[RMDB]
RNA sequence: GGGAACGACUCGAGUAGAGUCGAAAACGUCCUUUCGAGGACGGCUGAGGAAAAGUUAUAACGGUUAUGUUCAUAAUAACAGUCGUAAGCGUAUAGCUUUUCCCCUUCAAACCACGUUUCGACGUGGCCCCCUUUGUGGAUUCGUCCACAAAGGGGGAAAAGAAACAACAACAACAAC
Reactivity to 2A3 in 0.01 (KOAc 150mM, MgCl2 10mM, bicine 150mM(pH8.5), 24C), signal-to-noise 2, nucleotides 027 to 126: c010g000u000c020c000u020u000u130c190g150a000g020g000a000c000g000g030c080u090g080a220g050g000a030a010a000a020g020u020u000a000u010a090a090c050g040g090u020u010a000u010g080u100u010c060a080u090a300a060u140a240a060c060a050g060u060c040g000u000a000a010g070c000g010u010a000u010a010g010c000u000u010u000u000c000c000c000c000u040u120c150a180a160a120c010c000a000c000g020u050u060u110c180g060a040c010g010u010g010g000